[RMDB]
RNA sequence: GGGAACGACUCGAGUAGAGUCGAAAACAGCGUCGAAGGGAUGCGAGCUCGAGAAAGAAAGAUAGAGCUAACGGCUCGACUGACGGAGAGCUCUCGGACCGGGAUGCAAAUGGCGAAAGCGAUGUUGAAUGGGAUGAGGGACCGCGUCGUCGAUCGCCCUGGUAUCUACGUUCGCGUAGAUACCAGGAAAAGAAACAACAACAACAAC
Reactivity to DMS in 0.01 (KOAc 150mM, MgCl2 10mM, bicine 150mM(pH8.5), 24C), signal-to-noise 1, nucleotides 027 to 156: c020a070g000c000g040u000c020g010a260a240g000g020g000a230u000g040c060g040a050g020c000u020c010g000a290g010a030a210a120g010a050a140a050g020a090u000a180g010a040g040c010u000a100a110c080g050g010c000u000c010g020a180c050u000g040a200c010g000g010a300g000a010g060c000u000c000u010c020g010g000a300c010c040g000g000g000a050u000g020c000a090a050a140u000g000g020c020g010a090a060a200g000c040g040a050u010g010u000u000g070a190a160u000g000g010g040a130u000g000a220g010g000g030a050c080c010g020c110g010u000c020g020u020c020g000a120u030c000g000c120
Reactivity to 2A3 in 0.01 (KOAc 150mM, MgCl2 10mM, bicine 150mM(pH8.5), 24C), signal-to-noise 4, nucleotides 027 to 156: c030a010g010c010g020u020c010g120a130a040g040g000g010a010u040g020c030g020a010g000c010u010c050g100a100g090a110a120a000g070a020a060a000g060a080u280a070g010a010g010c010u040a140a050c130g080g000c010u000c020g040a050c030u050g010a040c030g060g040a060g000a000g050c010u000c000u000c010g030g010a020c000c020g020g010g020a000u020g010c000a000a110a050u120g060g000c010g010a040a020a000g000c010g010a030u030g020u120u120g050a160a140u190g040g020g020a040u120g050a150g030g040g010a040c020c000g030c010g080u000c010g000u020c010g000a090u040c010g010c010